RNA sequence: GGGAACGACUCGAGUAGAGUCGAAAAGGCAGGGCCCCUUUCCCACCCUCCAUUAAGAGCAAAUGUGGUUCUUUCUGUACUCUUGAUGCACCCUCAUUGCUGCUAUAAGGCAUAGUAAGAAACCUAGCUUACAGAAACCUUUCGAGGUUUCUGUAAGAAAAGAAACAACAACAACAAC
Reactivity to 2A3 in 0.01 (KOAc 150mM, MgCl2 10mM, bicine 150mM(pH8.5), 24C), signal-to-noise 2, nucleotides 027 to 126: g010g000c090a040g010g120g060c000c020c000c010u020u040u040c020c000c000a040c010c020c000u000c000c000a080u130u110a090a030g020a000g040c090a070a070a140u220g070u070g090g010u050u030c000u020u050u010c030u030g090u040a060c000u020c020u140u060g010a040u070g010c040a020c000c030c010u110c020a090u020u210g000c020u000g000c020u060a020u020a300a060g020g000c010a010u000a010g040u070a080a000g040a100a030a010c000c030u030a030g030
Reactivity to DMS in 0.01 (KOAc 150mM, MgCl2 10mM, bicine 150mM(pH8.5), 24C), signal-to-noise 3, nucleotides 027 to 126: g000g020c050a090g030g010g020c120c060c010c030u000u000u000c010c000c020a300c040c020c010u000c030c020a090u010u030a060a050g010a060g010c100a050a040a050u010g000u000g010g010u000u000c020u000u010u010c030u010g020u000a070c050u010c030u000u000g010a080u000g000c100a070c050c030c100u020c120a090u010u010g010c060u000g010c070u010a110u000a060a100g010g010c040a030u010a050g010u000a050a070g000a060a080a060c050c020u000a120g020
The record gives the reactivity of an RNA of 177 nucleotides to 2A3 and DMS. The RNA was probed in 150 mM KOAc, 10 mM MgCl2 and 150 mM bicine (pH 8.5) at 24 C.